The data come from the RNA Mapping Database (RMDB), library OK3TST. The record gives the reactivity of an RNA of 207 nucleotides to DMS and 2A3. For DMS the reverse transcriptase was MarathonRT. The DMS profile rests on 3,374 reads. The reactions ran in a buffer of 150 mM KOAc, 10 mM MgCl2 and 150 mM bicine (pH 8.5), at 24 C.
[RMDB]
RNA sequence: GGGAACGACUCGAGUAGAGUCGAAAAGCGUGGCGUGAAUGAUAUGCCCGAAACUAUAUGAGAGGAGACUUUGAAUCGUGUCCGAAUAUCUCCUGUAAUAGGAAGAACACCCUGCCAGUGGGCCUCAGCGAUGUGUGGGGCAAGUCAACGGUGAAGAGCAGGUAAAUUAUUUCGAUAAUUUACCUGCAAAAGAAACAACAACAACAAC
Reactivity to DMS in 0.01 (KOAc 150mM, MgCl2 10mM, bicine 150mM(pH8.5), 24C), signal-to-noise 2, nucleotides 027 to 156: g000c010g020u010g010g020c000g040u000g000a120a130u000g010a190u000a040u010g010c010c020c040g010a160a130a130c050u000a090u000a060u020g000a150g000a070g020g010a120g020a040c070u000u000u000g000a040a040u000c080g030u000g010u000c040c020g000a050a100u000a120u000c010u000c000c010u020g000u000a070a140u010a110g000g000a130a080g010a070a170c000a050c020c000c010u020g000c040c050a120g040u010g000g020g010c040c010u010c010a100g010c150g070a100u010g030u020g060u000g010g000g000g050c020a060a040g020u000c040a050a060c050g010g020u010g010a070a120g020a260
Reactivity to 2A3 in 0.01 (KOAc 150mM, MgCl2 10mM, bicine 150mM(pH8.5), 24C), signal-to-noise 3, nucleotides 027 to 156: g050c020g060u190g000g010c040g030u060g040a070a070u070g110a200u190a060u250g010c000c000c000g010a020a050a050c060u040a010u020a080u300g040a120g010a020g090g000a040g000a010c010u130u120u120g090a090a050u070c040g040u030g060u220c050c000g010a040a030u020a030u080c040u010c000c000u000g040u020a030a130u020a090g070g030a090a130g030a060a000c010a040c010c020c010u010g010c020c010a010g020u030g000g060g000c020c000u020c040a070g040c060g080a170u140g110u080g040u030g050g000g020g000c000a000a010g040u050c010a020a030c020g050g000u070g050a050a080g100a000